[RMDB]
This 177-nucleotide RNA was probed chemically with 2A3 and DMS. The 2A3 profile rests on 6,129 reads. DMS adducts were read by reverse transcription with MarathonRT. Reactivities are given for positions 27 through 126. The RNA was probed in 150 mM KOAc, 10 mM MgCl2 and 150 mM bicine (pH 8.5) at 24 C. For DMS, 6,623 sequencing reads were counted. It was measured as part of the RMDB library M2PK50.

RNA sequence: GGGAACGACUCGAGUAGAGUCGAAAACGAAUAGAAUUCGUUCUAUUCGAAUGACUGCUAAAAGCAGUGUUGACUGCGCCGAGCAGAAACGGCAAAGGAAAAAGUAGCCCAGAUUCGUCUGGGCUAACUAGUAUCCCUCAUUCGUGAGGGAUACUAGAAAAGAAACAACAACAACAAC
Reactivity to 2A3 in 0.01 (KOAc 150mM, MgCl2 10mM, bicine 150mM(pH8.5), 24C), signal-to-noise 4, nucleotides 027 to 126: c000g000a000a000u010a010g020a000a010u060u040c180g030u060u000c020u010a000u000u000c000g010a020a020u120g050a010c000u000g020c020u060a090a090a060a030g000c000a000g010u000g130u130u130g090a110c010u020g000c010g000c040c010g040a050g080c130a080g190a110a080a010c010g020g010c020a040a040a040g080g040a110a130a020a020a040g100u030a000g000c000c010c010a000g000a000u060u090c180g040u000c100u010g030g000g000c000u000a000a000
Reactivity to DMS in 0.01 (KOAc 150mM, MgCl2 10mM, bicine 150mM(pH8.5), 24C), signal-to-noise 6, nucleotides 027 to 126: c020g000a020a000u000a010g000a010a040u000u020c210g020u000u000c000u000a010u000u000c000g010a130a090u010g000a060c010u000g010c000u000a050a060a070a170g000c000a010g010u000g020u000u000g010a180c020u020g000c300g010c020c030g000a090g010c090a080g000a040a090a100c020g000g000c030a050a250a060g000g010a070a050a090a100a120g000u000a010g010c000c000c000a010g000a040u000u010c210g010u000c000u000g000g000g010c000u000a000a020